[RMDB]
RNA sequence: GGGAACGACUCGAGUAGAGUCGAAAAUCGUGAGAUGUGGUGCCUCACGCGCUCGAGGCGUCCGUGGUCAGAGAGACCACUGACGCAAAAACUCGAGCGCAAAUAAAGGGCAUUACAUCGAGAAUAACACUCAGGGAUAUUUCGAUAUCCCUGAGUGAAAAGAAACAACAACAACAAC
Reactivity to DMS in 0.01 (KOAc 150mM, MgCl2 10mM, bicine 150mM(pH8.5), 24C), signal-to-noise 3, nucleotides 027 to 126: u020c020g000u040g020a140g000a020u000g030u000g000g030u010g000c000c000u010c160a170c240g000c030g000c000u000c010g000a000g010g000c000g020u000c010c060g040u000g000g010u010c030a160g010a180g010a200g000a000c000c000a000c000u000g000a000c000g020c030a020a050a050a090a300c010u000c000g030a000g000c000g020c020a000a050a080u020a110a170a190g000g000g000c000a000u000u000a020c030a000u010c000g010a120g000a140a080u030a100a170
Reactivity to 2A3 in 0.01 (KOAc 150mM, MgCl2 10mM, bicine 150mM(pH8.5), 24C), signal-to-noise 3, nucleotides 027 to 126: u160c040g010u060g130a160g000a020u010g000u000g000g000u000g000c010c000u070c020a070c140g000c000g000c000u000c000g000a000g000g010c000g000u000c010c010g000u000g000g000u000c030a030g120a040g030a010g000a300c000c000a000c000u010g000a000c000g000c000a110a150a020a010a020c000u000c000g000a000g000c000g000c000a010a000a000u130a010a080a020g000g010g000c000a000u000u020a000c000a000u000c000g000a010g020a020a110u140a070a020
Chemical mapping of a 177-nucleotide RNA with DMS and 2A3. DMS adducts were read by reverse transcription with MarathonRT. For DMS, 5,613 sequencing reads were counted. The reactions ran in a buffer of 150 mM KOAc, 10 mM MgCl2 and 150 mM bicine (pH 8.5), at 24 C. The data come from the RNA Mapping Database (RMDB), library OK1LIB. For 2A3, 4,532 sequencing reads were counted.